[RMDB]
RNA sequence: GGGAACGACUCGAGUAGAGUCGAAAACUCUGUUAAGGAUACUCUGGCUUAUUAUGCUCACAGCGUGUUGUACAGAGUUUUUCCUUAUGACAUGGAUUCUGGUGUGUCAUCCUUUAGUGAACUACUUGCAUCUUACCCUUCGGGGUAAGAAAAAGAAACAACAACAACAAC
Reactivity to 2A3 in 0.01 (KOAc 150mM, MgCl2 10mM, bicine 150mM(pH8.5), 24C), signal-to-noise 9, nucleotides 027 to 129: c010u000c010u000g050u060u080a040a030g060g010a000u010a030c000u000c000u020g010g000c020u110u110a080u270u130a080u300g020c020u060c060a130c040a040g020c020g010u020g000u030u010g050u070a050c000a000g000a000g000u010u000u000u040u000c000c000u020u020a090u050g060a020c020a090u070g060g010a110u200u030c060u120g110g020u090g010u010g010u020c030a040u090c010c040u120u140u070a120g020u060g110a070a050c030u060a050c020u060u080g030c030a070
Reactivity to DMS in 0.01 (KOAc 150mM, MgCl2 10mM, bicine 150mM(pH8.5), 24C), signal-to-noise 7, nucleotides 027 to 129: c000u000c000u010g000u010u020a070a060g000g000a050u020a040c000u040c040u020g000g000c000u030u040a130u040u030a040u080g000c050u020c210a300c170a010g000c100g000u000g040u000u000g030u060a050c020a070g030a030g000u010u000u020u010u020c030c000u010u020a040u000g000a030c100a080u030g010g010a110u050u000c040u040g050g030u050g030u050g020u000c060a080u000c100c030u060u040u030a030g000u040g040a070a110c060u000a040c080u020u020g030c170a140